[RMDB]
RNA sequence: GGGAACGACUCGAGUAGAGUCGAAAACGACGAAACUUACGCUCUAGCUGCCUAAGGGCAGUUUGUCCGCUUCCUAGAAUACUUGUGGUUUAGGAACCCGACCGUAGCGCACGCACACAAGUCCGUAUAGAGUCAAGCCUCGGGGCUUUAUACCAAACUAUCUUCUAAUCUUCGGAUUAGAAGAUAGAAAAGAAACAACAACAACAAC
Reactivity to 2A3 in 0.01 (KOAc 150mM, MgCl2 10mM, bicine 150mM(pH8.5), 24C), signal-to-noise 5, nucleotides 027 to 156: c050g090a010c040g050a070a080a030c080u160u180a040c080g020c010u020c020u030a020g020c010u010g010c000c020u070a120a150g050g000g000c010a000g000u020u030u090g010u020c020c020g010c040u020u010c010c000u010a020g050a060a040u070a080c030u030u030g020u040g030g000u040u040u040a020g020g000a030a020c030c040c040g020a040c040c080g080u120a010g040c020g010c030a030c080g070c010a010c000a000c010a050a030g030u040c050c030g030u030a020u010a020g030a000g010u010c020a030a040g050c010c030u060c050g040g000g010g010c000u010u030u010a020u010a010c020c020a020a060a060
Reactivity to DMS in 0.01 (KOAc 150mM, MgCl2 10mM, bicine 150mM(pH8.5), 24C), signal-to-noise 2, nucleotides 027 to 156: c050g040a140c040g040a060a050a070c060u020u000a120c010g000c000u020c030u000a080g040c000u010g030c010c020u000a130a130g080g000g040c000a010g010u000u000u000g020u000c010c070g010c110u000u010c020c020u000a060g010a110a080u000a070c030u000u000g020u000g010g010u000u000u000a020g000g010a050a080c010c030c020g000a120c020c070g000u010a040g020c030g030c050a070c080g000c060a070c000a040c000a050a070g000u000c180c040g010u000a030u000a020g000a050g030u000c020a040a090g010c070c040u000c040g020g000g010g000c040u000u000u000a030u000a040c000c030a060a100a210
Chemical mapping of a 207-nucleotide RNA with 2A3 and DMS. Source: RMDB library RSTRND, as collected in RNAgym.